[RMDB]
RNA sequence: GGGAACGACUCGAGUAGAGUCGAAAACAUUGCAGCUUCGGCUGCAAUGAAUCUCUGGUCUCUACGUCUCUACUCGAUAGAGGCUGGAGUAGUCGUUCCCGAUGGCGCCCCAAUUCGUUGGGGCGAAUUGACUCAAUUUAUUCGUAAAUUGAGUCAAAAAAGAAACAACAACAACAAC
Reactivity to DMS in 0.01 (KOAc 150mM, MgCl2 10mM, bicine 150mM(pH8.5), 24C), signal-to-noise 5, nucleotides 027 to 126: c010a010u000u000g010c000a000g010c000u000u010c220g020g010c000u000g000c010a000a000u000g010a090a090u000c060u000c010u010g010g000u010c000u000c000u000a030c070g010u000c040u000c040u000a030c050u010c150g010a180u010a000g010a010g000g010c010u010g000g010a060g020u010a010g000u000c000g010u000u000c000c000c000g010a040u010g010g000c010g010c010c000c010c000a010a040u000u000c170g020u000u000g010g000g000g010c000g000a000a020
Reactivity to 2A3 in 0.01 (KOAc 150mM, MgCl2 10mM, bicine 150mM(pH8.5), 24C), signal-to-noise 4, nucleotides 027 to 126: c000a000u000u000g000c000a000g010c010u050u110c240g180g000c010u000g000c000a000a000u000g000a010a020u030c020u000c020u060g050g030u050c000u010c000u020a040c050g030u000c020u000c020u070a060c040u040c130g040a050u030a040g000a000g000g020c030u050g020g020a030g010u040a010g000u010c000g000u000u010c000c000c000g010a120u070g110g070c000g010c010c000c000c000a010a010u050u040c120g040u050u010g010g000g000g010c000g000a000a000
This 177-nucleotide RNA was probed chemically with DMS and 2A3. The data come from the RNA Mapping Database (RMDB), library M2PK50. The 2A3 profile rests on 9,771 reads.